[RMDB]
RNA sequence: GGGAACGACUCGAGUAGAGUCGAAAAGGCUGAUGCCGGAGCCGAUACCGGAAUACGAGACCUUAUGUGCGGUCGAAUGCACUGAAGUACGAAAGUACGAAGAGGUCAGACCGAGGACCGAGACUCGAUAUGCUCGGUAGAUGGAGCUUUACAUCAAAUGCCUAAAUGAGUUCGCUCAUUUAGGCAUAAAAGAAACAACAACAACAAC
Reactivity to 2A3 in 0.01 (KOAc 150mM, MgCl2 10mM, bicine 150mM(pH8.5), 24C), signal-to-noise 1, nucleotides 027 to 156: g010g070c070u070g000a040u200g070c050c030g020g000a010g000c000c100g030a020u220a140c000c060g000g000a050a000u110a170c100g010a040g040a100c000c000u030u050a040u210g040u000g030c020g000g040u090c070g020a010a050u130g000c000a000c030u020g130a050a050g020u000a000c000g000a280a000a000g000u010a000c000g000a080a010g030a020g010g000u010c000a010g060a070c010c090g000a000g060g010a060c050c090g000a000g060a120c000u080c020g090a110u000a030u210g000c000u000c040g040g000u000a020g040a020u070g010g040a020g000c030u070u080u060a080c020a060u100c030a000a150
Reactivity to DMS in 0.01 (KOAc 150mM, MgCl2 10mM, bicine 150mM(pH8.5), 24C), signal-to-noise 1, nucleotides 027 to 156: g000g000c080u000g000a170u000g010c000c050g000g050a070g010c050c040g040a190u030a040c000c000g020g000a060a060u010a040c010g010a070g010a060c000c010u000u000a100u000g020u010g040c030g030g020u000c170g000a140a240u060g000c050a090c000u000g000a120a280g010u000a040c030g020a210a130a230g040u000a020c020g050a120a260g010a130g010g020u000c030a240g040a080c090c020g000a110g000g010a070c070c010g000a080g000a100c000u000c040g000a240u000a020u000g000c050u010c000g000g000u000a020g010a070u020g000g000a090g030c030u000u000u000a000c050a100u000c020a030a180
Chemical mapping of a 207-nucleotide RNA with 2A3 and DMS. The 2A3 profile rests on 449 reads.